[RMDB]
RNA sequence: GGGAACGACUCGAGUAGAGUCGAAAAACGAGUCCGUACGCGGACUCGAAGGGCCCCAGAAGACCAAGGGGCCCAAACCUACCACUCAUUAGAUGCAUGGAAAUCACUACGUGAUACGUCACCUAGAACACGCUUUUAAGCUUCGGCUUAAAAGCAACCUGAUGUAAAGCUUCGGCUUUACAUCAGGAAAAGAAACAACAACAACAAC
Reactivity to 2A3 in 0.01 (KOAc 150mM, MgCl2 10mM, bicine 150mM(pH8.5), 24C), signal-to-noise 2, nucleotides 027 to 156: a020c010g000a010g000u000c000c000g000u030a070c210g020c030g050g010a000c000u010c010g010a010a000g020g020g000c000c040c000c000a080g160a300a010g080a100c110c110a100a050g000g010g010g010c010c000c000a000a000a030c000c000u030a030c010c020a060c030u140c010a070u060u170a060g040a110u120g060c090a040u050g040g060a010a120a090u050c010a010c020u080a040c070g040u020g010a020u010a080c090g020u010c010a020c000c070u040a060g080a170a060c100a020c100g000c000u010u010u000u000a000a000g000c000u060u140c300g140g000c000u000u000a000a000a000a000g000c000a000a010